[RMDB]
The data come from the RNA Mapping Database (RMDB), library M2PK90. This 177-nucleotide RNA was probed chemically with DMS and 2A3. The DMS profile rests on 10,349 reads. 2A3 adducts were read by reverse transcription with SuperScript II with manganese. The 2A3 profile rests on 42,884 reads. The reactions ran in a buffer of 150 mM KOAc, 10 mM MgCl2 and 150 mM bicine (pH 8.5), at 24 C. Values cover nucleotides 27 to 126.

RNA sequence: GGGAACGACUCGAGUAGAGUCGAAAAAUACACUGCACGUGCGUGCGAGCAGUUUUCGAAAUAAUCGUACGUACGUAAAGACCCAACUCUACUCGAUGCGAGGGUCAGCAAAGUCGAUCCCAUAUAAAGUUAAUAAUGGAUUCGUCCAUUAUUAACUAAAAGAAACAACAACAACAAC
Reactivity to DMS in 0.01 (KOAc 150mM, MgCl2 10mM, bicine 150mM(pH8.5), 24C), signal-to-noise 7, nucleotides 027 to 126: a080u010a110c150a120c090u000g000c300a030c010g030u000g000c020g020u000g000c000g020a020g000c280a160g010u000u010u010u000c160g020a060a050a040u000a060a160u000c010g020u000a010c020g020u000a020c020g020u000a020a160a060g010a080c050c030c010a100a040c010u000c000u000a010c000u000c000g010a100u000g010c010g000a100g000g000g010u000c060a190g000c020a110a130a060g000u000c000g000a070u000c000c000c000a100u010a050u010a080a080
Reactivity to 2A3 in 0.01 (KOAc 150mM, MgCl2 10mM, bicine 150mM(pH8.5), 24C), signal-to-noise 9, nucleotides 027 to 126: a000u160a020c070a010c110u140g040c090a000c010g000u000g010c010g000u010g010c010g000a020g030c150a050g020u020u030u080u250c140g120a070a030a030u110a040a040u030c000g000u010a000c000g000u010a000c000g000u000a010a010a000g000a000c010c010c000a010a010c000u000c000u010a010c000u000c000g030a020u050g000c010g010a130g010g040g050u050c020a010g000c020a130a270a030g000u000c000g010a030u010c000c010c000a000u020a000u010a010a050